[RMDB]
RNA sequence: GGGAACGACUCGAGUAGAGUCGAAAAAUCAGAUUCCAUAAUUGCCUGUAUAUCAUCAGCUGAAAAACUAUGUUUUACACGUAUUCCUUCGGCAUUUCUUUUUAAUGAUAUAUCUUGUUUAGACAAUGAUAAAGUUAUCAUGUCCAUGGGAGAUGCGCAAGGAAGAAGCUUUCGAGCUUCUUCCUUGAAAAGAAACAACAACAACAAC
Reactivity to 2A3 in 0.01 (KOAc 150mM, MgCl2 10mM, bicine 150mM(pH8.5), 24C), signal-to-noise 2, nucleotides 027 to 156: a010u100c030a030g090a150u070u020c030c020a040u210a060a150u220u100g020c040c030u030g050u050a040u020a010u100c030a010u000c040a030g040c010u100g010a110a000a010a020a020c090u050a090u060g030u030u130u070u180a090c100a000c010g030u030a090u030u090c000c000u010u040c010g000g020c020a040u070u100u070c030u010u190u110u070u250a110a020u040g000a020u030a000u000a010u060c030u030u000g040u040u130u030a030g020a050c060a100a070u050g010a020u040a030a140a020g060u090u030a010u020c020a020u030g030u000c030c070a040u060g000g000g030a070g030a040u160g000c090g030
Reactivity to DMS in 0.01 (KOAc 150mM, MgCl2 10mM, bicine 150mM(pH8.5), 24C), signal-to-noise 1, nucleotides 027 to 156: a080u010c070a130g010a230u010u000c010c010a180u020a130a190u000u000g020c010c030u010g020u000a040u000a020u000c000a000u000c040a090g030c020u050g000a040a090a040a030a040c060u010a030u000g000u000u000u010u000a090c080a060c080g020u000a110u000u000c020c020u000u000c030g020g000c000a130u000u020u030c020u010u010u020u010u020a000a060u000g000a030u000a030u000a050u010c020u000u000g000u000u000u000a080g000a030c020a030a030u040g000a030u000a050a110a220g050u000u000a040u000c000a010u000g000u000c030c100a050u000g000g020g000a000g000a100u000g020c100g000
This 207-nucleotide RNA was probed chemically with 2A3 and DMS. The 2A3 profile rests on 849 reads. For DMS the reverse transcriptase was MarathonRT.